[RMDB]
RNA sequence: GGGAACGACUCGAGUAGAGUCGAAAAUCUGCUGCCCUCUCCUGUCAUUUCUGCACUCCCUGGAGGAGGAGGAGGUGCAAGGGGCUUCAUGUCCCCUCUUCCAGCUGAAUGGAGGAGGUGGCAGCUUUUAUCAUCACAUCUGGUCCUCAAAGCCCUAUGAAGAUAACAUUUUCGAAUGUUAUCUUCAAAAAGAAACAACAACAACAAC
Reactivity to DMS in 0.01 (KOAc 150mM, MgCl2 10mM, bicine 150mM(pH8.5), 24C), signal-to-noise 1, nucleotides 027 to 156: u010c030u000g030c020u000g010c030c010c000u000c000u020c000c020u020g010u050c030a100u000u010u000c050u010g000c090a240c100u000c100c070c010u010g000g010a060g000g020a050g040g020a120g010g000a080g060g030u010g020c050a090a100g010g020g020g050c020u000u050c050a090u010g000u010c000c010c000c000u000c000u000u010c000c000a030g040c090u010g000a090a140u010g000g010a040g010g010a020g020g030u000g010g000c000a010g000c050u000u000u000u020a060u010c130a130u010c070a100c050a080u010c050u000g030g010u000c030c030u000c020a060a060a120g030c010c010c020u010a300
Reactivity to 2A3 in 0.01 (KOAc 150mM, MgCl2 10mM, bicine 150mM(pH8.5), 24C), signal-to-noise 3, nucleotides 027 to 156: u020c020u070g030c000u000g000c000c000c000u000c000u040c030c010u130g150u230c100a050u080u190u170c060u100g060c050a050c120u130c010c040c020u020g000g000a010g010g000a000g030g010a190g000g010a030g000g020u000g010c020a170a120g000g000g020g010c010u000u040c020a050u070g120u160c000c000c000c010u000c010u000u010c000c010a030g000c050u060g020a020a010u020g040g030a000g000g000a020g030g000u010g010g000c010a000g000c000u010u030u010u010a040u020c010a010u050c010a030c010a100u030c060u120g080g000u080c030c030u130c080a040a030a020g010c040c030c000u100a130

Chemical mapping of a 207-nucleotide RNA with DMS and 2A3. It was measured as part of the RMDB library OK3TST. 2A3 adducts were read by reverse transcription with SuperScript II with manganese. The DMS profile rests on 4,092 reads. For DMS the reverse transcriptase was MarathonRT.